Chemical mapping of a 177-nucleotide RNA with DMS and 2A3. Source: RMDB library TTRDEL, as collected in RNAgym.
RNA sequence: GGGAACGACUCGAGUAGAGUCGAAAAGAUAUGGAGCAAUGGACAUGCUCCACUGGUCGGAAACGACCAAGAAGAGCAACAGCCCGCUUGCUCCUAAGUCAAACCGUUUUUCUUCGGAAAAACGGAAUCAUACAUAUCCGUUCGCGGAUAUGUAUGAAAAAGAAACAACAACAACAAC
Reactivity to DMS in 0.01 (KOAc 150mM, MgCl2 10mM, bicine 150mM(pH8.5), 24C), signal-to-noise 2, nucleotides 027 to 126: g000a060u010a300u000g000g000a010g020c000a060a010u010g000g010a010c030a260u000g000c000u000c010c040a110c100u000g000g000u000c000g010g000a100a090a220c010g000a010c000c000a020a020g010a220a220g000a010g010c000a020a100c190a170g020c010c000c000g000c250u000u000g000c000u000c000c030u000a040a060g010u000c030a130a130a150c000c000g010u000u000u000u000u000c010u000u020c170g020g000a010a000a000a000a000c000g000g000a020a030
Reactivity to 2A3 in 0.01 (KOAc 150mM, MgCl2 10mM, bicine 150mM(pH8.5), 24C), signal-to-noise 3, nucleotides 027 to 126: g030a010u060a020u130g000g010a000g010c010a010a060u210g020g010a050c060a110u130g000c010u000c010c000a010c020u010g000g000u000c010g000g000a080a070a090c000g000a000c000c010a000a010g020a020a000g000a000g000c010a010a140c030a170g030c000c010c000g060c080u000u010g010c000u010c000c000u020a130a010g030u010c030a040a050a120c000c010g000u010u010u000u000u000c020u030u080c240g110g000a000a000a000a000a000c000g000g020a000a020